RNA sequence: GGGAACGACUCGAGUAGAGUCGAAAAGAUAUGGAUGGAUUAACGCAACAGCAUGUGUUUCGGAAACGAAACCAUGACAUGCGUGAUCCAUCCUAAGUCAAAAGUAUAUACCUUCGGGUAUAUACAAGCCUACUAACUAGUUCGCUAGUUAGUAGGCAAAAGAAACAACAACAACAAC
Reactivity to 2A3 in 0.01 (KOAc 150mM, MgCl2 10mM, bicine 150mM(pH8.5), 24C), signal-to-noise 5, nucleotides 027 to 126: g000a010u020a010u050g000g000a000u010g000g000a000u060u140a300a070c010g020c070a300a300c080a300g020c000a010u010g250u010g020u100u010u010c000g000g020a010a000a010c000g000a010a000a010c000c000a000u000g070a010c040a120u300g000c000g000u000g000a000u000c000c000a000u000c000c000u000a000a000g000u000c000a020a040a180a060g000u000a000u000a000u010a010c010c000u030u140c300g180g000g000u000a010u000a000u000a000c000a000a010
Reactivity to DMS in 0.01 (KOAc 150mM, MgCl2 10mM, bicine 150mM(pH8.5), 24C), signal-to-noise 3, nucleotides 027 to 126: g020a010u000a020u020g000g000a020u000g000g000a020u000u010a030a010c010g040c010a130a090c200a160g010c000a010u000g010u010g020u000u000u000c000g010g010a020a010a030c010g010a000a010a000c000c010a000u000g000a010c050a300u020g000c010g010u010g000a000u000c000c000a000u000c010c000u000a000a050g000u010c010a100a100a110a190g010u000a010u000a000u000a010c000c000u000u020c250g030g000g030u000a000u000a000u000a010c010a080a140
Chemical mapping of a 177-nucleotide RNA with 2A3 and DMS. Source: RMDB library TTRDES, as collected in RNAgym. For 2A3 the reverse transcriptase was SuperScript II with manganese.